About this RNA
Structure probing data (2A3 and DMS) for a 177-nucleotide construct. The RNA was probed in 150 mM KOAc, 10 mM MgCl2 and 150 mM bicine (pH 8.5) at 24 C. Reactivities are given for positions 27 through 126. The data come from the RNA Mapping Database (RMDB), library RFM100. DMS adducts were read by reverse transcription with MarathonRT. For 2A3, 902 sequencing reads were counted.
[RMDB]
RNA sequence: GGGAACGACUCGAGUAGAGUCGAAAAACUUAAGCAUAUCAGUAAGCGGAGGAAAAGAAACUAACAAGGAUUCCGUCAGUAACGGCGAGUGAAGACGGAGUAGCCCAAGGUUCAAUCCUGGAUCUCUUUCUGAGAGCAUAUUCGUAUGCUCUCAGAAAAAAGAAACAACAACAACAAC
Reactivity to 2A3 in 0.01 (KOAc 150mM, MgCl2 10mM, bicine 150mM(pH8.5), 24C), signal-to-noise 2, nucleotides 027 to 126: a000c050u140u100a090a000g000c000a100u090a110u180c070a050g130u010a100a000g060c010g030g060a020g030g020a030a060a000a000g090a030a130a050c000u040a060a000c100a000a050g000g000a010u020u000c000c000g020u000c030a070g030u060a000a000c020g090g000c210g100a030g000u060g070a010a010g120a020c030g000g010a000g000u000a020g000c000c000c020a030a040g060g030u020u060c030a010a010u030c130c000u040g060g000a010u040c010u000c010u060
Reactivity to DMS in 0.01 (KOAc 150mM, MgCl2 10mM, bicine 150mM(pH8.5), 24C), signal-to-noise 2, nucleotides 027 to 126: a130c140u080u000a040a040g000c060a060u010a020u010c080a110g000u010a060a080g000c070g000g020a070g000g010a020a060a120a100g020a030a000a020c080u020a080a140c070a220a100g000g000a050u050u000c020c010g080u010c000a000g000u010a070a030c000g000g020c220g010a220g000u000g030a060a040g000a040c000g000g000a030g010u000a040g080c000c000c030a040a070g000g000u020u010c090a080a150u010c020c060u000g000g000a140u030c000u010c060u000